This 207-nucleotide RNA was probed chemically with DMS and 2A3. 2A3 adducts were read by reverse transcription with SuperScript II with manganese.
[RMDB]
RNA sequence: GGGAACGACUCGAGUAGAGUCGAAAAGAACAUGGUUUCGACCAUGUUCAAAAAGAUAUGGAUCUCUCCUGGUUCGAUGAAAUACAUUCGGAAACGAAUGUAUGGAGAACCUGGAGAGGAUCCUAAGUCAAAAAAGCUGGAGUUUCGACUCCAGCAAGCAUUAUUACUUGUUCGCAAGUAAUAAUGCAAAAGAAACAACAACAACAAC
Reactivity to DMS in 0.01 (KOAc 150mM, MgCl2 10mM, bicine 150mM(pH8.5), 24C), signal-to-noise 2, nucleotides 027 to 156: g000a010a020c010a000u030g030g010u020u000u000c300g010a040c000c000a040u000g070u000u000c000a020a070a070a160a110g010a150u000a300u000g020g010a010u000c000u000c000u000c000c000u000g010g000u000u010c010g000a110u010g020a140a140a020u000a000c000a020u000u000c010g070g000a160a100a300c020g000a030a000u000g020u000a010u000g020g000a120g000a020a000c000c000u000g010g020a040g010a040g000g010a020u000c000c000u000a050a130g000u020c040a000a060a150a200a100a180g000c000u000g000g000a030g000u000u000u000c230g020a140c000u000c000c000a000g020c000a010a080
Reactivity to 2A3 in 0.01 (KOAc 150mM, MgCl2 10mM, bicine 150mM(pH8.5), 24C), signal-to-noise 4, nucleotides 027 to 156: g000a000a000c000a010u000g000g030u040u070u190c230g030a030c000c000a000u000g000u000u000c010a010a020a000a020a010g060a030u080a030u080g010g000a000u000c020u000c010u000c000c010u040g000g050u000u000c040g040a300u060g020a010a010a010u000a000c000a000u000u000c000g030g010a070a070a060c010g000a000a010u000g000u010a000u000g000g010a020g000a000a000c000c010u000g000g000a000g000a000g010g000a000u000c000c000u000a060a010g030u030c030a010a060a060a060a160a030g000c000u040g020g000a010g000u060u090u110c090g160a020c000u000c000c010a010g000c000a010a000

The DMS profile rests on 3,287 reads. Conditions: 150 mM KOAc, 10 mM MgCl2 and 150 mM bicine (pH 8.5), 24 C.